Source: RMDB library RFMREP, as collected in RNAgym. Chemical mapping of a 177-nucleotide RNA with DMS and 2A3. For DMS, 1,301 sequencing reads were counted. Values cover nucleotides 27 to 126. Conditions: 150 mM KOAc, 10 mM MgCl2 and 150 mM bicine (pH 8.5), 24 C.
RNA sequence: GGGAACGACUCGAGUAGAGUCGAAAACAGGACAAUGGUGAGUGCCGGUGCCUGCCCUGGGGCCGUCCCUGCGCAGGGGCCGGGUGCUCACCGCAUCUGAAAAGUGAGCUAAGUUCGCUUAGCUCACCACUCACCUGUGGUUCGCCACAGGUGAGUGAAAAGAAACAACAACAACAAC
Reactivity to DMS in 0.01 (KOAc 150mM, MgCl2 10mM, bicine 150mM(pH8.5), 24C), signal-to-noise 2, nucleotides 027 to 126: c060a170g030g000a040c170a040a090u000g010g020u000g010a020g050u000g040c000c000g010g030u000g020c000c000u000g020c010c050c040u010g010g000g010g020c300c250g030u000c020c000c000u000g000c300g020c010a030g010g000g000g030c010c000g010g010g000u000g050c000u010c020a010c000c010g030c160a030u000c010u020g000a070a060a120a140g010u000g000a000g020c000u000a010a000g010u010u020c220g020c000u000u000a000g010c000u000c000a000c010
Reactivity to 2A3 in 0.01 (KOAc 150mM, MgCl2 10mM, bicine 150mM(pH8.5), 24C), signal-to-noise 2, nucleotides 027 to 126: c040a000g070g110a040c060a150a140u260g000g030u000g010a000g020u000g040c000c000g000g010u050g290c000c010u010g010c000c010c000u050g000g010g040g000c160c070g220u240c020c000c000u030g020c040g010c040a000g020g010g020g000c020c010g110g030g020u020g000c000u000c000a010c000c000g000c010a020u020c000u010g040a130a060a030a000g000u010g010a010g000c000u010a000a000g010u030u050c130g040c140u000u000a010g010c020u000c000a000c000